The record gives the reactivity of an RNA of 177 nucleotides to 2A3 and DMS. Source: RMDB library TTRDEL, as collected in RNAgym. The 2A3 profile rests on 11,290 reads. The RNA was probed in 150 mM KOAc, 10 mM MgCl2 and 150 mM bicine (pH 8.5) at 24 C.
RNA sequence: GGGAACGACUCGAGUAGAGUCGAAAAGAUAUGGACUGGUGACAUGCUUACGAGCUCGGAAACGAGCUCUUUGGUAAGCAACAGCACCACAUGUCCUAAGUCAAACCGACCAGUUCGCUGGUCGGAAUCUAGAAAUCUAGUUCGCUAGAUUUCUAGAAAAAGAAACAACAACAACAAC
Reactivity to 2A3 in 0.01 (KOAc 150mM, MgCl2 10mM, bicine 150mM(pH8.5), 24C), signal-to-noise 4, nucleotides 027 to 126: g030a010u070a060u120g010g010a010c050u060g010g040u020g040a110c030a130u100g000c000u000u010a010c030g000a000g000c000u010c000g040g040a070a090a060c000g020a010g000c000u000c050u010u030u060g060g020u010a000a000g030c000a030a040c090a040g020c000a010c010c010a030c030a060u210g000u000c000c000u020a120a010g070u040c070a070a060a100c000c000g000a000c010c000a010g030u050u110c240g090c150u010g030g000u000c000g000g010a000a010
Reactivity to DMS in 0.01 (KOAc 150mM, MgCl2 10mM, bicine 150mM(pH8.5), 24C), signal-to-noise 7, nucleotides 027 to 126: g010a060u000a300u000g000g010a040c040u000g000g010u000g000a040c060a190u000g000c000u010u000a010c010g010a010g010c010u000c000g000g000a090a090a200c010g000a000g010c000u000c000u000u000u010g030g010u000a010a010g010c010a020a040c250a150g000c000a010c000c000a090c300a080u000g000u000c000c010u000a050a130g010u010c060a050a120a180c000c000g000a010c000c000a010g000u000u010c230g010c010u000g000g010u000c000g000g010a010a010